[RMDB]
RNA sequence: GGGAACGACUCGAGUAGAGUCGAAAAACGCCGUGGACGUCGUCACCCCCUCCUGCUGUGUCCAGGGCUUGGCCGAGGAGGCCGGCAAGCUGUCCGAGAUGGCCGCAGUUUACAGGUGCAUGGCCACCCAAGGCAACAAAUUCGUUUGUUGCCUUGGAAAAGAAACAACAACAACAAC
Reactivity to 2A3 in 0.01 (KOAc 150mM, MgCl2 10mM, bicine 150mM(pH8.5), 24C), signal-to-noise 1, nucleotides 027 to 126: a000c040g010c020c010g060u040g080g010a010c000g080u060c000g010u050c050a150c020c000c000c000c000u000c010c010u010g020c030u020g030u020g000u090c010c020a020g040g050g000c040u040u110g080g040c010c000g020a070g100g050a040g050g000c000c000g020g020c010a030a020g000c000u060g030u090c060c030g050a070g040a150u050g020g010c010c000g000c010a010g010u040u090u050a100c060a020g030g000u000g050c040a040u090g070g030c000c010a020c010
Reactivity to DMS in 0.01 (KOAc 150mM, MgCl2 10mM, bicine 150mM(pH8.5), 24C), signal-to-noise 4, nucleotides 027 to 126: a100c130g010c020c030g030u010g000g000a070c050g010u000c050g010u010c130a250c040c010c010c010c020u000c020c020u000g010c020u000g010u000g000u000c030c010a060g010g000g010c020u000u010g020g020c000c000g020a190g000g010a250g000g010c040c000g010g010c060a080a070g000c040u000g000u000c060c030g020a120g010a120u010g010g010c070c020g020c030a020g000u000u000u010a050c170a060g000g010u010g020c050a080u000g020g000c000c040a070c100